Record summary
An RNA of 207 nucleotides, treated with 2A3 and DMS and read out base by base. The RNA was probed in 150 mM KOAc, 10 mM MgCl2 and 150 mM bicine (pH 8.5) at 24 C.
[RMDB]
RNA sequence: GGGAACGACUCGAGUAGAGUCGAAAAUAUGCAUUCGUGCAUACCUGGUCCUAAGUCCUCGUUAUCUUGCGUUGUCAGUCGGUAUCGGAAACGAUAUUUCGACUUGGAUUUACGCAAGCCGAGACGAGGAUAUGGAAUUGAAGGGCUUCGGCCCUAAUUGCGAGACAAUAUUCGUAUUGUCUCGCAAAAAAGAAACAACAACAACAAC
Reactivity to 2A3 in 0.01 (KOAc 150mM, MgCl2 10mM, bicine 150mM(pH8.5), 24C), signal-to-noise 2, nucleotides 027 to 156: u010a010u010g000c000a020u050u110c250g100u000g020c000a000u010a080c000c010u080g080g040u040c000c000u030a180a040g040u000c000c010u010c000g020u000u040a120u150c000u010u000g040c000g040u020u000g020u030c000a010g000u010c000g000g010u000a000u000c010g050g050a090a020a110c000g000a000u000a020u020u290u270c020g000a000c000u000u070g020g000a010u110u140u140a020c020g000c000a000a000g010c010c050g300a300g020a000c020g000a000g000g000a000u010a010u000g000g000a040a070u110u140g130a110a050g060g000g040c000u050u100c260g170g000c000c010c000u000a030a180
Reactivity to DMS in 0.01 (KOAc 150mM, MgCl2 10mM, bicine 150mM(pH8.5), 24C), signal-to-noise 1, nucleotides 027 to 156: u000a000u000g020c010a000u020u020c300g000u010g040c000a020u000a030c010c060u000g030g030u000c000c010u000a080a300g020u000c000c000u010c000g000u000u000a150u000c000u000u020g010c030g000u000u000g020u000c030a030g000u000c000g000g000u000a030u020c000g020g000a120a150a300c040g000a030u000a010u000u000u020c030g010a010c000u010u010g030g010a070u000u010u000a060c040g010c000a010a000g000c240c130g000a300g010a000c020g040a030g010g010a010u010a070u010g010g010a070a110u000u000g000a130a070g000g010g060c010u000u000c200g040g020c000c000c010u000a000a000
Source: RMDB library RNAMAK, as collected in RNAgym. DMS adducts were read by reverse transcription with MarathonRT.